[RMDB]
The record gives the reactivity of an RNA of 177 nucleotides to 2A3 and DMS.
The reactions ran in a buffer of 150 mM KOAc, 10 mM MgCl2 and 150 mM bicine (pH 8.5), at 24 C.
2A3 adducts were read by reverse transcription with SuperScript II with manganese.
For DMS, 4,696 sequencing reads were counted.
Values cover nucleotides 27 to 126.
The data come from the RNA Mapping Database (RMDB), library TTRDES.
RNA sequence: GGGAACGACUCGAGUAGAGUCGAAAAGAUAUGGAGCGGCCAGGGAGACGGUGGUCGGAAACGACCAUACGUCGAAGAACUGGCGCUCCUAAGUCAAAACCGAACGUAAGUUCGCUUACGUUCGGAACAAGUACUCUACGUUCGCGUAGAGUACUUGAAAAGAAACAACAACAACAAC
Reactivity to 2A3 in 0.01 (KOAc 150mM, MgCl2 10mM, bicine 150mM(pH8.5), 24C), signal-to-noise 3, nucleotides 027 to 126: g000a010u020a010u050g000g010a010g010c070g120g180c070c000a010g000g030g000a070g000a000c000g000g000u000g000g030u000c000g010g010a020a010a000c000g000a010c000c030a020u220a240c030g000u010c010g020a120a020g000a010a000c000u000g000g010c000g000c010u000c000c000u010a000a000g000u000c000a000a020a120a190c000c010g000a000a000c000g000u000a010a000g030u060u180c300g030c210u000u000a000c000g000u000u010c000g000g020a010a010
Reactivity to DMS in 0.01 (KOAc 150mM, MgCl2 10mM, bicine 150mM(pH8.5), 24C), signal-to-noise 3, nucleotides 027 to 126: g010a010u000a010u010g000g010a020g010c000g010g020c010c000a010g010g000g010a020g010a000c010g000g020u000g000g020u000c000g010g000a010a010a030c000g010a020c000c010a000u010a030c000g040u010c000g010a120a160g000a220a300c010u000g000g000c020g020c000u010c000c000u000a000a060g000u010c020a100a060a160a170c010c000g000a010a010c000g010u000a000a010g020u000u020c290g010c000u000u010a000c000g010u000u000c000g010g000a030a080